This 177-nucleotide RNA was probed chemically with 2A3. The 2A3 profile rests on 754 reads. Source: RMDB library OK1LIB, as collected in RNAgym. The RNA was probed in 150 mM KOAc, 10 mM MgCl2 and 150 mM bicine (pH 8.5) at 24 C.
RNA sequence: GGGAACGACUCGAGUAGAGUCGAAAAUUCAUGGAGACCCAUCCCACACUGGAUGCCUUACACUGUGACAUCGGCAAUGCCACUGAGUUUAACAAAAUAUUCCAAGAUGAGAUUCGGGAGGUGUCCCGGCAGUAUGAGCCUUCGGGCUCAUACUGCCAAAAGAAACAACAACAACAAC
Reactivity to 2A3 in 0.01 (KOAc 150mM, MgCl2 10mM, bicine 150mM(pH8.5), 24C), signal-to-noise 2, nucleotides 027 to 126: u050u050c020a010u070g050g020a050g040a060c000c000c030a060u010c010c030c000a100c010a040c040u000g000g000a000u020g070c010c030u030u000a010c030a010c130u070g020u030g050a030c000a020u000c000g010g050c080a000a090u070g040c050c000a040c030u000g000a010g130u080u030u050a110a030c080a000a020a120a050u140a120u050u000c020c000a060a110g110a160u100g020a000g040a150u180u060c020g000g070g000a040g010g000u040g010u030c000c000c030